[RMDB]
RNA sequence: GGGAACGACUCGAGUAGAGUCGAAAACUCUUAUCGAGAGCGGCAGAGGGACUGGCCCGAUGAAGCCCGGCAACCUAACUUUAUUUAAGCGUAAAGUGAAGGUGCUAAUUCCACCAAAAUGGUGUAUAAACGACCGUUAACUUCGGUUAACGGUCAACAUCAACAAAUUCUUCGGAAUUUGUUGAUGAAAAGAAACAACAACAACAAC
Reactivity to DMS in 0.01 (KOAc 150mM, MgCl2 10mM, bicine 150mM(pH8.5), 24C), signal-to-noise 1, nucleotides 027 to 156: c000u000c010u010u000a260u010c030g010a040g010a100g010c060g020g000c050a090g010a200g000g000g040a200c080u000g030g030c040c000c020g050a170u000g010a120a040g040c010c040c020g020g010c030a050a000c030c000u000a180a030c000u000u000u000a000u000u000u000a140a160g050c300g000u000a010a010a020g010u010g000a100a020g100g000u000g000c000u000a080a160u000u000c050c010a040c000c020a070a050a090a090u000g010g010u000g020u000a100u000a100a070a120c060g010a050c010c000g000u000u010a000a000c000u000u000c300g070g020u000u000a000a010c000g000g010u000c010a010a060
Reactivity to 2A3 in 0.01 (KOAc 150mM, MgCl2 10mM, bicine 150mM(pH8.5), 24C), signal-to-noise 3, nucleotides 027 to 156: c000u000c010u010u050a100u050c040g010a020g010a020g100c030g030g010c040a030g040a070g040g030g020a060c100u110g110g100c000c000c000g010a040u040g020a040a020g000c000c000c060g010g000c020a070a090c000c000u010a000a000c000u030u020u010a050u100u080u150a170a030g100c090g030u010a010a010a010g000u040g050a130a010g000g000u000g010c000u000a030a050u160u080c070c000a030c000c040a040a130a090a200u150g000g010u050g040u020a120u100a130a150a030c150g000a000c000c000g010u000u000a000a000c000u020u040c160g030g000u000u000a000a000c000g000g000u000c000a000a000

Background: This 207-nucleotide RNA was probed chemically with DMS and 2A3. Values cover nucleotides 27 to 156. For 2A3, 1,715 sequencing reads were counted. The reactions ran in a buffer of 150 mM KOAc, 10 mM MgCl2 and 150 mM bicine (pH 8.5), at 24 C. Values are in units of 0.01, from 0 to 300, in steps of 10.